[RMDB]
The record gives the reactivity of an RNA of 177 nucleotides to 2A3 and DMS. For 2A3, 681 sequencing reads were counted. Reactivities are rounded to 0.1 and cut off at 0 and 3. For DMS, 996 sequencing reads were counted. The reactions ran in a buffer of 150 mM KOAc, 10 mM MgCl2 and 150 mM bicine (pH 8.5), at 24 C.
RNA sequence: GGGAACGACUCGAGUAGAGUCGAAAAAGACUAAAAAAUAACUUUCACGAUUAUGAAAAUAAACAUGCAAAGUUGUCGCCAAGAAUUGAUGAUAGAACCGUAAUGCUCAACGGGUAACCGAAUUGAGGCAGUACGGUAUGUUCGCAUACCGUACUGCAAAAGAAACAACAACAACAAC
Reactivity to 2A3 in 0.01 (KOAc 150mM, MgCl2 10mM, bicine 150mM(pH8.5), 24C), signal-to-noise 2, nucleotides 027 to 126: a020g070a000c160u220a050a010a030a000a000a080u030a070a000c010u000u000u000c050a000c020g020a020u080u100a060u060g070a060a050a000a000u070a050a090a000c020a040u030g040c070a000a010a010g060u020u000g050u080c020g060c060c090a040a020g120a040a020u230u220g020a070u000g030a030u070a020g140a040a010c000c080g030u050a280a040u140g020c000u020c000a000a000c000g000g060g040u160a050a140c020c020g000a050a120u040u060g000a000g020
Reactivity to DMS in 0.01 (KOAc 150mM, MgCl2 10mM, bicine 150mM(pH8.5), 24C), signal-to-noise 1, nucleotides 027 to 126: a110g100a100c140u110a040a020a070a000a010a040u050a060a000c020u000u000u000c020a010c150g070a190u000u150a010u140g000a000a020a030a000u030a000a000a000c030a060u030g000c150a000a000a000g000u000u000g000u050c160g030c100c000a030a070g000a030a080u000u000g000a040u000g000a100u020a020g000a000a140c000c040g120u040a060a060u040g020c000u020c010a080a020c000g000g000g000u020a210a180c030c000g010a030a070u000u000g000a100g000